[RMDB]
Structure probing data (2A3 and DMS) for a 207-nucleotide construct. For DMS, 2,425 sequencing reads were counted. Conditions: 150 mM KOAc, 10 mM MgCl2 and 150 mM bicine (pH 8.5), 24 C. For DMS the reverse transcriptase was MarathonRT.
RNA sequence: GGGAACGACUCGAGUAGAGUCGAAAACUGAGAUUCGUCUCAGAAAAACCUUUGUGCUUAGACAUGCGUCAAACUCCUGCGGAUCCCAUUGGGAUCCGAACUACAGGAGGUAGACGCAACAGCUAAGCACUCUGGUAAACCCUAGGUUCGCCUAGGGCCUACAUUCGAGAUUCGUCUCGAAUGUAGGAAAAGAAACAACAACAACAAC
Reactivity to 2A3 in 0.01 (KOAc 150mM, MgCl2 10mM, bicine 150mM(pH8.5), 24C), signal-to-noise 6, nucleotides 027 to 156: c010u000g000a010g010a010u050u170c230g080u010c080u000c010a000g090a110a060a000a010a010c010c000u010u010u010g010u010g000c010u010u010a000g030a110c020a130u040g000c000g000u000c010a260a300a070c010u010c000c000u020g010c010g010g000a010u000c030c000c080a300u300u300g020g000g000a000u000c000c010g000a010a020c090u290a040c020a000g000g000a010g000g000u000a000g000a000c000g000c000a000a000c000a000g000c000u000a000a000g000c000a000c000u000c010u000g000g010u020a090a080a060c010c000c000u000a000g030g050u050u080c240g080c040c000u000a000g000g000g000
Reactivity to DMS in 0.01 (KOAc 150mM, MgCl2 10mM, bicine 150mM(pH8.5), 24C), signal-to-noise 1, nucleotides 027 to 156: c010u010g010a000g010a010u000u000c240g020u000c010u020c010a020g010a060a160a090a110a020c010c010u000u000u010g010u000g080c010u000u000a020g010a110c070a300u000g030c010g030u020c000a100a130a300c010u000c020c010u000g010c040g000g030a030u000c000c010c010a300u010u030g060g080g040a000u000c000c000g040a000a100c010u010a070c000a000g010g020a010g020g030u010a130g000a010c000g000c010a010a020c040a210g000c020u000a040a000g020c010a000c010u000c040u010g000g030u010a100a050a200c030c000c010u000a010g000g000u020u000c200g030c000c000u000a010g000g000g010